[RMDB]
RNA sequence: GGGAACGACUCGAGUAGAGUCGAAAACGAUGUGUCGAUCAUGGCCGCGGCGGGUCAGUAUCCGCACACCUUGCGGUUCGAUAUGGACGGCAAGUCGGUAUCCGUCCCAUUUCACCUCCCACGACCACCUCCUGCGCACCUUCGGGUGCGCAGGAGGAAAAGAAACAACAACAACAAC
Reactivity to 2A3 in 0.01 (KOAc 150mM, MgCl2 10mM, bicine 150mM(pH8.5), 24C), signal-to-noise 1, nucleotides 027 to 126: c000g070a120u010g090u010g000u040c000g040a050u090c030a100u160g040g000c000c000g080c030g190g020c010g000g000g000u080c080a000g090u120a030u000c010c000g000c000a060c000a120c080c040u090u090g060c060g050g000u300u230c000g000a000u000a160u300g010g010a000c010g030g000c000a000a060g040u060c000g000g120u090a040u000c000c110g000u030c050c010c000a030u100u080u000c000a000c000c060u090c040c000c000a100c060g050a000c080c000a000